[RMDB]
RNA sequence: GGGAACGACUCGAGUAGAGUCGAAAAGGCAGCUGACUGGCUAACCACAUAAACACAUAAAUGUACCUUUGAGCUGUGUUAGUUGAAUGGACCCUGUCAAAACAUUAGUAUAGAGUUUGACAUAGUCAAAGGAAAGAUUCUUCGGAAUCUUUCCUUUAAAAGAAACAACAACAACAAC
Reactivity to DMS in 0.01 (KOAc 150mM, MgCl2 10mM, bicine 150mM(pH8.5), 24C), signal-to-noise 7, nucleotides 027 to 126: g000g000c030a020g020c000u010g010a000c010u010g010g010c100u010a070a090c210c110a070c070a040u010a050a130a150c180a140c200a100u020a070a120a050u020g010u010a130c070c060u010u010u010g000a050g010c010u010g010u020g010u000u000a030g020u000u000g000a040a050u010g010g010a080c000c030c180u000g000u000c000a010a010a020a010c020a130u040u020a130g010u070a110u020a090g000a120g000u000u000u000g000a010c000a020u010a100g010u010c110
Reactivity to 2A3 in 0.01 (KOAc 150mM, MgCl2 10mM, bicine 150mM(pH8.5), 24C), signal-to-noise 3, nucleotides 027 to 126: g000g000c000a020g000c010u010g030a030c000u000g020g000c010u030a040a040c070c030a060c000a070u120a030a210a010c050a000c000a080u060a170a230a010u140g030u060a060c040c080u080u040u110g130a030g000c060u080g020u010g040u210u000a060g050u000u020g080a180a230u110g020g020a060c040c000c000u000g000u000c000a000a020a070a020c010a050u240u150a070g140u060a130u050a110g300a000g090u000u000u000g000a020c030a020u080a000g110u120c030

Conditions: 150 mM KOAc, 10 mM MgCl2 and 150 mM bicine (pH 8.5), 24 C. Structure probing data (DMS and 2A3) for a 177-nucleotide construct. 2A3 adducts were read by reverse transcription with SuperScript II with manganese. The 2A3 profile rests on 982 reads. It was measured as part of the RMDB library OK1LIB.